[RMDB]
RNA sequence: GGGAACGACUCGAGUAGAGUCGAAAAGAUAUGGAACACGCUUUUGACGAGCCAUAUUCGGAAACGAAUACGCGCUCGAUAAGCAGUGUUCCUAAGUCAAAGACGUAAAAGUUCGCUUUUACGUCAACACCAAUGGCAACUUCGGUUGCCAUUGGUGAAAAGAAACAACAACAACAAC
Reactivity to 2A3 in 0.01 (KOAc 150mM, MgCl2 10mM, bicine 150mM(pH8.5), 24C), signal-to-noise 2, nucleotides 027 to 126: g000a010u060a010u080g010g010a000a000c000a020c010g060c040u020u030u270u300g300a300c300g030a000g000c000c000a010u010a020u070u030c000g010g000a030a020a030c020g010a010a000u010a010c100g140c040g000c050u000c090g090a070u040a040a000g020c110a020g010u000g010u010u000c000c000u010a000a000g000u000c030a090a140a090g000a000c010g000u010a000a000a000a000g030u070u140c240g100c110u000u000u000u000a010c000g000u000c000a000a020
Reactivity to DMS in 0.01 (KOAc 150mM, MgCl2 10mM, bicine 150mM(pH8.5), 24C), signal-to-noise 2, nucleotides 027 to 126: g000a010u010a300u020g000g000a000a000c000a000c000g020c000u000u000u000u030g050a170c220g000a000g020c020c010a020u000a000u000u000c000g000g000a080a070a110c000g000a020a000u000a000c000g020c210g020c000u000c000g010a060u000a010a000g030c000a080g050u000g020u000u000c000c000u000a000a100g000u000c020a110a170a070g000a030c000g040u010a000a000a030a000g010u000u010c210g010c030u000u000u000u000a000c020g000u000c000a030a120